This 207-nucleotide RNA was probed chemically with 2A3.
As a SHAPE reagent, 2A3 marks flexible, mostly unpaired nucleotides at the ribose 2'-OH.
The RNA was probed in 150 mM KOAc, 10 mM MgCl2 and 150 mM bicine (pH 8.5) at 24 C.

RNA sequence: GGGAACGACUCGAGUAGAGUCGAAAACCGGCCGAGGUUUGAGGCGCCCAAAAUGAUCGGGACUCAAAUCCACCACCGAGACCUGUCCGUACCACUCAUACUGGUAAUCGAGUAGAUUGGCGCUCUAAUUGGAUGGAAGCAGGGGCGAGAGCUCCUGGAAAGUCCAUGACUUCGGUCAUGGACUUUCAAAAGAAACAACAACAACAAC
Reactivity to 2A3 in 0.01 (KOAc 150mM, MgCl2 10mM, bicine 150mM(pH8.5), 24C), signal-to-noise 1, nucleotides 027 to 156: c000c000g000g000c110c040g080a150g000g000u000u000u030g010a030g070g030c120g250c010c010c040a010a060a050a120u300g050a120u210c110g000g000g000a010c020u000c030a000a010a010u000c010c000a010c000c010a040c000c080g030a050g040a120c010c000u030g040u030c020c040g010u000a000c010c000a040c010u030c030a070u090a190c010u030g100g000u070a070a070u140c040g000a020g020u040a010g050a060u070u080g030g000c050g030c070u000c000u040a090a120u160u110g050g000a050u020g000g000a070a020g050c010a010g030g000g020g010c010g000a100g000a000g010c000u000c010c000u030g020